Source information
Chemical mapping of a 177-nucleotide RNA with 2A3. It was measured as part of the RMDB library OK2TRN. The reactions ran in a buffer of 150 mM KOAc, 10 mM MgCl2 and 150 mM bicine (pH 8.5), at 24 C. The 2A3 profile rests on 934 reads.

RNA sequence: GGGAACGACUCGAGUAGAGUCGAAAAGAAACGGGCGAGACCCAAGGGAGGGAGGGAAUAUAUACGGGAAGUGAAGAAGCCCCGAAGGAGCGAGGAGCAAGUAUGUAUAAUUACUUCACAAGCCCGACACGAGUAAUAGGUUCGCCUAUUACUCGUGAAAAGAAACAACAACAACAAC
Reactivity to 2A3 in 0.01 (KOAc 150mM, MgCl2 10mM, bicine 150mM(pH8.5), 24C), signal-to-noise 1, nucleotides 027 to 126: g010a010a070a000c020g000g080g020c100g010a070g120a140c050c030c090a030a030g080g060g050a260g070g050g060a140g130g030g020a060a000u170a030u020a020u020a070c010g000g000g000a000a000g010u010g010a000a000g090a050a030g040c010c040c000c020g050a080a080g100g110a020g140c020g050a080g020g040a080g010c000a020a040g030u190a050u140g070u000a060u070a040a080u070u070a100c000u010u010c010a000c000a010a040g000c000c000c000g000a000